[RMDB]
RNA sequence: GGGAACGACUCGAGUAGAGUCGAAAAAUCUGCUUUCUAUGUUAAGGAUGGUAAAUACUUUACAAGUGAACCACCCGUAACAUAUUCACCAGCUACAAUUUUAGCUGGUAGUGUCUACACUAAUAGCCUGCGGGCAUGUUCGCAUGCCCGAAAAGAAACAACAACAACAAC
Reactivity to 2A3 in 0.01 (KOAc 150mM, MgCl2 10mM, bicine 150mM(pH8.5), 24C), signal-to-noise 6, nucleotides 027 to 129: a010u030c040u020g050c030u070u130u040c000u050a000u010g000u000u000a060a010g010g000a040u030g000g000u030a090a140a030u140a030c000u060u110u070a120c130a100a000g000u000g030a020a010c000c000a000c000c000c000g000u000a000a000c020a010u060a030u080u110c040a010c000c000a000g000c010u050a030c140a300a300u090u090u100u030a010g000c010u000g000g000u020a000g010u020g000u000c080u120a080c080a020c090u100a070a090u040a170g050c030c020u060g020
Reactivity to DMS in 0.01 (KOAc 150mM, MgCl2 10mM, bicine 150mM(pH8.5), 24C), signal-to-noise 5, nucleotides 027 to 129: a000u040c050u020g000c110u000u000u000c060u040a010u010g020u010u000a060a040g040g000a060u000g010g030u010a030a060a030u060a000c010u000u000u010a120c220a120a040g030u000g050a120a030c000c000a000c060c000c000g020u010a030a000c000a030u000a040u020u080c060a130c000c040a010g050c000u000a000c300a140a080u050u100u010u030a060g000c000u000g080g050u030a050g020u020g020u030c060u000a060c090a090c040u040a040a050u020a010g010c040c050u020g020